[RMDB]
RNA sequence: GGGAACGACUCGAGUAGAGUCGAAAAACAAUAGCACUAUACUAUAAUAAUGGAAGCUCAUAUUCAAACCUUACACUAGUAGGUUCACCUACAGUAUCUAUUGUACAGGACUUUGGUGGAUAUGCAAUCUGACUAGUCCGUUCGCGGACUAGUCAGAAAAAGAAACAACAACAACAAC
Reactivity to 2A3 in 0.01 (KOAc 150mM, MgCl2 10mM, bicine 150mM(pH8.5), 24C), signal-to-noise 2, nucleotides 027 to 126: a000c140a150a160u110a000g060c020a000c090u050a040u110a110c150u070a000u100a300a000u200a240a040u180g020g020a040a010g030c000u030c030a000u060a110u110u020c010a000a190a040c070c000u080u060a020c160a000c050u060a010g030u000a040g110g000u040u000c160a180c070c020u050a000c010a050g000u000a030u000c000u120a010u030u080g010u140a000c050a050g150g040a060c050u050u170u160g010g020u010g010g010a000u000a000u100g090c050a000a070